[RMDB]
Structure probing data (DMS and 2A3) for a 177-nucleotide construct.

RNA sequence: GGGAACGACUCGAGUAGAGUCGAAAAUGUCAGUUUUUACUCAGUGUUGGAUUUAAUUAUGUAGGACCAAAACAUUCCUCAGUAAAUUAGCUUGCUAAAUAUUGUUACUUUUGUGAUUCUGCCUUUGCUUGAGUAUUACGUUCGCGUAAUACUCAAGAAAAGAAACAACAACAACAAC
Reactivity to DMS in 0.01 (KOAc 150mM, MgCl2 10mM, bicine 150mM(pH8.5), 24C), signal-to-noise 3, nucleotides 027 to 126: u010g000u010c080a080g000u000u020u000u000u010a060c060u010c070a110g010u010g020u000u000g010g010a130u010u010u010a090a070u000u000a080u010g000u010a050g020g010a040c090c060a030a060a060a080c110a110u010u010c060c020u000c030a080g000u000a010a040a100u000u000a050g010c030u000u020g020c050u000a030a030a100u000a080u000u000g020u000u000a040c100u000u010u000u000g010u000g000a100u010u000c030u000g020c070c040u010u010u000g000
Reactivity to 2A3 in 0.01 (KOAc 150mM, MgCl2 10mM, bicine 150mM(pH8.5), 24C), signal-to-noise 2, nucleotides 027 to 126: u150g020u030c020a030g000u000u000u000u020u090a090c060u040c020a020g080u000g010u100u050g040g010a180u060u000u140a130a180u160u160a100u190g140u090a030g020g020a000c040c020a000a000a070a150c030a020u180u140c000c030u030c000a020g000u080a000a090a060u080u070a010g000c030u070u160g010c020u040a090a010a010u120a080u050u070g030u050u020a140c050u010u090u120u020g100u110g110a200u090u030c050u090g090c010c030u030u020u040g030